[RMDB]
RNA sequence: GGGAACGACUCGAGUAGAGUCGAAAACAAAUCACCUCACCCUACUUAGUAGGAUGAUACAGCAAGCAAAGCCAACUGUUACUGUUUUCUACAUGUUGAAAGGCAACCUGAUGAAUACAGAGCCGACCGUUGCAGAACUUGUCAGUUAUGGCAUCAAGAGAUGACUAAUAUUCGUAUUAGUCAUCUCAAAAGAAACAACAACAACAAC
Reactivity to 2A3 in 0.01 (KOAc 150mM, MgCl2 10mM, bicine 150mM(pH8.5), 24C), signal-to-noise 8, nucleotides 027 to 156: c030a000a080a040u120c060a070c040c010u020c010a040c010c010c000u020a020c030u210u160a070g010u010a010g020g030a040u030g010a000u080a160c080a040g050c040a100a020g010c020a060a070a060g030c050c040a030a020c020u010g010u070u040a030c010u020g010u030u100u030u020c010u040a090c010a050u070g030u050u060g160a230a160a060g110g020c010a020a010c020c010u030g020a060u060g020a080a010u090a040c010a010g060a030g080c020c070g030a020c010c020g030u030u020g000c020a000g010a070a050c030u060u040g020u060c020a020g010u080u170a080u170g040g020c020a040u060c030a090a020
Reactivity to DMS in 0.01 (KOAc 150mM, MgCl2 10mM, bicine 150mM(pH8.5), 24C), signal-to-noise 4, nucleotides 027 to 156: c050a080a080a110u000c060a100c040c060u000c010a020c010c000c020u000a040c020u010u000a150g030u000a010g030g010a020u000g010a060u000a050c060a110g020c040a080a110g000c060a070a100a150g010c040c020a030a060c030u000g010u010u000a110c050u010g010u000u000u010u000c010u000a190c050a040u010g020u000u010g000a070a110a140g020g020c020a050a040c050c040u000g010a180u000g020a100a100u000a070c030a070g010a140g020c010c030g000a110c050c020g020u010u000g000c000a110g000a100a090c040u010u010g020u000c010a040g010u000u000a100u000g010g020c060a120u000c050a090a300
Overview: An RNA of 207 nucleotides, treated with 2A3 and DMS and read out base by base. The RNA was probed in 150 mM KOAc, 10 mM MgCl2 and 150 mM bicine (pH 8.5) at 24 C. The DMS profile rests on 11,003 reads. Reactivities are rounded to 0.1 and cut off at 0 and 3.